[RMDB]
RNA sequence: GGGAACGACUCGAGUAGAGUCGAAAAAGGGUGACCUAACGCAACAGCAACGAGAUGUGCUCCAUCGGGCAGUGAUAACUUCUUGGCAACCCCAACCUUAAAAAUUCGACUUCAAUUCAAUACAUGUGACCAGAUAAACACAGCUUCAAGCGCAUUAGUCGUACCACUAUUUCGAUAGUGGUACGACAAAAGAAACAACAACAACAAC
Reactivity to DMS in 0.01 (KOAc 150mM, MgCl2 10mM, bicine 150mM(pH8.5), 24C), signal-to-noise 1, nucleotides 027 to 156: a110g010g040g020u000g020a120c020c030u000a080a030c110g020c040a060a080c020a150g060c070a120a090c070g030a170g000a080u000g010u010g010c050u000c050c050a180u000c060g030g010g000c020a070g010u010g050a080u000a060a090c040u000u000c000u010u000g010g040c030a060a030c020c010c000c000a080a060c120c070u000u030a000a030a080a100a130u020u000c070g000a110c030u000u020c040a020a100u010u000c040a060a110u080a080c100a100u020g040u000g000a130c020c020a060g000a100u000a060a040a080c020a000c110a060g000c070u000u020c060a100a080g020c140g040c030a050u000u010a170
Reactivity to 2A3 in 0.01 (KOAc 150mM, MgCl2 10mM, bicine 150mM(pH8.5), 24C), signal-to-noise 4, nucleotides 027 to 156: a000g080g020g000u060g050a100c020c020u050a100a020c050g010c050a070a090c060a140g060c020a040a050c050g040a040g010a120u110g010u060g050c030u050c030c010a060u100c070g020g040g000c020a020g000u030g070a040u020a080a060c010u020u050c000u050u060g030g000c000a010a050c000c000c000c030a000a090c030c000u070u120a020a040a020a070a140u090u060c030g040a040c000u050u010c080a060a150u100u040c050a060a080u090a240c070a060u140g040u020g050a010c010c020a010g000a060u110a030a070a000c040a000c000a070g010c000u110u100c040a090a020g020c050g000c060a030u050u100a030